This 177-nucleotide RNA was probed chemically with 2A3 and DMS. The reactions ran in a buffer of 150 mM KOAc, 10 mM MgCl2 and 150 mM bicine (pH 8.5), at 24 C.

RNA sequence: GGGAACGACUCGAGUAGAGUCGAAAAGAAGAGCGUACCUAGCUGUGUUUCAACCUGCAUGGGUUGGGGCGGCUUAGCGGAUUAGGCGUUGUUAUGCCCUAGUGGUCCUUACUCCAUGCAAAGCCUGCAUAGUCCACUUGUUCGCAAGUGGACUAUGAAAAGAAACAACAACAACAAC
Reactivity to 2A3 in 0.01 (KOAc 150mM, MgCl2 10mM, bicine 150mM(pH8.5), 24C), signal-to-noise 1, nucleotides 027 to 126: g060a030a030g030a000g030c010g050u060a060c000c000u020a010g070c050u000g070u030g020u170u000u040c040a060a040c010c040u020g000c020a030u020g000g000g000u030u030g000g010g000g000c100g030g010c000u090u080a050g000c070g040g100a070u060u130a060g070g000c030g150u070u090g060u210u190a090u280g040c020c020c010u020a000g010u030g300g000u000c020c000u040u030a000c000u010c060c000a000u000g000c040a010a000a000g010c020c000u020g020
Reactivity to DMS in 0.01 (KOAc 150mM, MgCl2 10mM, bicine 150mM(pH8.5), 24C), signal-to-noise 3, nucleotides 027 to 126: g010a080a070g000a060g030c040g030u000a070c060c060u010a080g020c030u000g010u000g010u000u000u000c050a090a110c130c040u010g000c070a030u000g000g020g010u000u000g000g010g010g010c020g000g010c020u000u000a030g030c130g010g000a090u010u000a090g000g000c050g030u010u000g030u010u000a070u010g000c030c000c020u000a040g030u000g000g030u000c020c020u000u000a040c020u000c000c000a020u000g010c020a040a060a090g010c050c080u000g010

In probing experiments dimethyl sulfate is read out at A N1 and C N3, which are open when not base-paired.
For DMS the reverse transcriptase was MarathonRT.
It was measured as part of the RMDB library VIROID.